[RMDB]
RNA sequence: GGGAACGACUCGAGUAGAGUCGAAAAACAAGGCUAUUAAACUGAUGAAUGUGUUUGAUCCUGUUGGGCCUCAGUAAGACAUUCUUAAAGAUGGAAAUCCAUGAAAAACGUGUAGCUAGUAACUGAUAAAACUUGGAUCCACUCUUUUGCUAGGACACCUCAAAAUGAGUUUCGACUCAUUUUGAGGAAAAGAAACAACAACAACAAC
Reactivity to DMS in 0.01 (KOAc 150mM, MgCl2 10mM, bicine 150mM(pH8.5), 24C), signal-to-noise 2, nucleotides 027 to 156: a060c080a090a090g000g000c040u000a200u000u000a070a100a140c030u000g020a110u000g000a040a070u010g020u000g020u010u000u000g000a050u010c020c030u010g000u000u000g040g010g020c000c040u010c020a100g030u000a130a100g010a050c040a100u000u010c030u010u000a030a060a050g020a080u020g020g010a070a090a030u000c010c030a060u010g000a040a070a060a170a050c130g010u010g020u000a070g000c030u000a170g030u010a050a090c020u000g010a120u000a040a060a060a060c010u000u000g020g010a060u000c010c020a040c100u000c020u000u000u000u010g000c040u000a080g000g030a070c110a100
Reactivity to 2A3 in 0.01 (KOAc 150mM, MgCl2 10mM, bicine 150mM(pH8.5), 24C), signal-to-noise 2, nucleotides 027 to 156: a030c030a020a060g040g000c020u080a060u120u130a170a090a070c020u060g080a160u110g050a170a060u110g040u010g010u050u040u090g000a040u090c020c030u020g030u080u040g050g000g000c010c010u030c010a010g000u040a030a030g030a060c010a020u070u050c060u020u110a070a040a010g010a040u010g000g020a040a140a030u010c010c010a020u010g090a090a010a000a040a030c020g010u060g010u070a040g010c020u020a050g040u060a070a040c070u050g030a100u070a070a030a000a000c000u010u020g000g010a020u030c000c000a060c040u040c000u010u030u000u100g020c030u030a020g010g060a010c000a010
Conditions: 150 mM KOAc, 10 mM MgCl2 and 150 mM bicine (pH 8.5), 24 C. An RNA of 207 nucleotides, treated with DMS and 2A3 and read out base by base. 2A3 adducts were read by reverse transcription with SuperScript II with manganese. Values cover nucleotides 27 to 156. Source: RMDB library OK3TST, as collected in RNAgym. The DMS profile rests on 3,051 reads.